RNA sequence: GGGAACGACUCGAGUAGAGUCGAAAAAGGCCCUAGUGUACCAAUCACAGGAUCAAAGGAGCAACACCAACUGAAAGCAGAAGGUGAAGCGAUCCGCUCAAAGGAUCAGCUGAAAGCUUUCAGAAGACAAAGGCGUUGUGUUCGCACAACGCCUUUGAAAAGAAACAACAACAACAAC
Reactivity to DMS in 0.01 (KOAc 150mM, MgCl2 10mM, bicine 150mM(pH8.5), 24C), signal-to-noise 1, nucleotides 027 to 126: a240g040g010c000c010c010u010a150g000u000g000u000a170c180c080a080a090u050c090a140c040a270g000g000a080u000c030a000a080a050g030g050a090g040c150a060a030c050a030c020c000a100a170c000u000g000a010a000a050g000c000a030g040a260a190g000g020u000g000a220a040g000c060g000a010u000c000c000g000c260u030c200a060a120a210g000g000a010u000c000a100g000c030u000g010a210a160a190g000c000u000u000u000c000a010g000a160a030g010a250
Chemical mapping of a 177-nucleotide RNA with DMS. DMS adducts were read by reverse transcription with MarathonRT. The reactions ran in a buffer of 150 mM KOAc, 10 mM MgCl2 and 150 mM bicine (pH 8.5), at 24 C.